Chemical mapping of a 177-nucleotide RNA with DMS and 2A3. The reactions ran in a buffer of 150 mM KOAc, 10 mM MgCl2 and 150 mM bicine (pH 8.5), at 24 C. High DMS reactivity at an A or C suggests that its Watson-Crick edge is free. It was measured as part of the RMDB library RFMREP. DMS adducts were read by reverse transcription with MarathonRT. The 2A3 profile rests on 1,964 reads. For DMS, 2,624 sequencing reads were counted.
RNA sequence: GGGAACGACUCGAGUAGAGUCGAAAAUCAGCCUACUUUAUGUAUAGCUUAGUUUGUCGAUAUGAGGCAUAAUGCCCUACAACGUAGCGGUGUCAUAUAAUUGAGAAGUCUAAAUUUAAGGAUUAGCCAUUUAGACGAUCUUCGGAUCGUCUAAAUGAAAAGAAACAACAACAACAAC
Reactivity to DMS in 0.01 (KOAc 150mM, MgCl2 10mM, bicine 150mM(pH8.5), 24C), signal-to-noise 3, nucleotides 027 to 126: u010c120a150g010c030c020u000a040c070u020u000u010a030u020g020u000a060u000a110g020c030u010u000a070g010u000u000u010g020u000c070g010a090u010a060u010g000a100g010g010c010a120u000a070a080u010g000c000c000c030u000a040c030a080a120c160g020u000a020g030c080g020g000u000g000u000c020a020u000a050u000a080a120u010u010g000a110g000a070a070g010u020c020u000a010a030a070u000u000u010a070a090g000g010a120u000u000a070g000c100
Reactivity to 2A3 in 0.01 (KOAc 150mM, MgCl2 10mM, bicine 150mM(pH8.5), 24C), signal-to-noise 1, nucleotides 027 to 126: u070c000a020g060c000c000u040a060c050u080u160u080a060u070g030u030a030u090a050g000c010u050u050a060g060u110u110u050g070u040c030g010a010u010a050u210g090a080g010g000c000a030u030a130a060u240g000c000c000c000u010a010c030a210a020c110g020u010a000g010c050g070g020u030g020u050c000a000u090a000u030a160a110u090u120g060a060g050a110a000g020u000c000u070a050a130a160u120u140u100a090a050g080g010a050u000u030a000g020c010